[RMDB]
RNA sequence: GGGAACGACUCGAGUAGAGUCGAAAAGAUAUGGAUCCUAGUGGACAUGCUCUUUGGGUCGGAAACGACCCUUUGAGCAACAGCCACAGGGAUCCUAAGUCAAAAUCAGCGAGUUCGCUCGCUGAAAGAUCUCAAUCAUGUUCGCAUGAUUGAGAUCAAAAGAAACAACAACAACAAC
Reactivity to 2A3 in 0.01 (KOAc 150mM, MgCl2 10mM, bicine 150mM(pH8.5), 24C), signal-to-noise 3, nucleotides 027 to 126: g000a000u020a000u030g020g000a010u000c010c010u050a030g000u010g000g010a060c220a300u300g000c000u000c010u000u010u000g000g020g030u010c000g020g000a000a010a000c000g010a020c020c030c000u000u000u000g000a000g000c000a000a000c020a000g000c000c020a000c000a010g000g010g000a000u010c010c000u000a020a000g000u000c030a030a000a000a300u040c000a000g020c010g020a000g020u070u080c220g110c130u020c000g000c020u000g000a000a000a010
Reactivity to DMS in 0.01 (KOAc 150mM, MgCl2 10mM, bicine 150mM(pH8.5), 24C), signal-to-noise 4, nucleotides 027 to 126: g000a030u000a050u000g000g010a000u000c000c000u010a140g030u000g000g010a000c040a300u010g030c000u000c000u000u000u000g000g000g030u000c000g010g010a010a020a060c000g010a000c000c000c000u000u000u000g010a030g020c010a080a020c220a070g000c000c010a000c000a300g000g000g010a000u000c000c000u000a020a060g020u000c000a130a090a090a240u010c000a010g000c010g000a020g010u000u010c250g020c000u000c000g010c000u000g010a010a060a090

About this RNA
Chemical mapping of a 177-nucleotide RNA with 2A3 and DMS. It was measured as part of the RMDB library TTRDES. The DMS profile rests on 4,267 reads. The RNA was probed in 150 mM KOAc, 10 mM MgCl2 and 150 mM bicine (pH 8.5) at 24 C.